[RMDB]
RNA sequence: GGGAACGACUCGAGUAGAGUCGAAAAUGCGCAGCCUUUAAGGGAUGUUACUCAUGCCACGAGAAAUUCAAUAUAUAAGAGCUCUCGUCUAUUGCAAGAUAUAAGUUACUGAGCAUGUUAUGUUGGAAAGAUAACAUGCUGUAGUAAUAAUGAAUUGCCAACCUGUUACGUUCGCGUAACAGGUUGGAAAAGAAACAACAACAACAAC
Reactivity to 2A3 in 0.01 (KOAc 150mM, MgCl2 10mM, bicine 150mM(pH8.5), 24C), signal-to-noise 2, nucleotides 027 to 156: u200g010c050g030c010a010g020c020c050u090u120u170a130a100g010g000g010a010u030g020u060u110a110c010u020c060a020u160g060c050c000a000c030g010a020g010a030a050a000u160u090c040a140a010u110a030u060a060u110a220a050g030a010g030c010u000c000u030c020g070u000c060u070a160u070u200g040c040a030a030g050a060u030a020u040a220a050g020u000u000a000c000u020g000a000g000c010a000u000g000u000u000a040u040g180u220u150g080g040a050a030a010g100a020u000a000a000c000a040u000g000c010u000g010u010a000g000u000a010a010u060a090a140u110g070a000a110u060u150g000